RNA sequence: GGGAACGACUCGAGUAGAGUCGAAAACCGAGUAGCCACGUCAUACGCGAAUAAAAGCUGAAAGCAUCUAAGCUUGAAGUCGCCCCUGAAAAUAGACAUUGUUUGAGAUCACUCUUAAAAGAAGAGGCUAAUACUCCUCGUUCGCGAGGAGUAUUAGAAAAGAAACAACAACAACAAC
Reactivity to DMS in 0.01 (KOAc 150mM, MgCl2 10mM, bicine 150mM(pH8.5), 24C), signal-to-noise 2, nucleotides 027 to 126: c040c020g010a110g010u020a100g010c000c050a060c070g000u000c050a050u020a100c150g030c010g010a030a030u000a170a110a010a020g010c020u000g000a110a130a190g030c110a030u000c040u000a190a060g010c000u000u000g000a060a150g010u000c000g000c020c010c020c050u010g010a080a060a060a080u000a080g010a050c050a070u010u000g010u010u000u010g000a050g000a060u000c100a110c020u000c010u000u000a090a030a090a110g000a040a030g000a010g000g000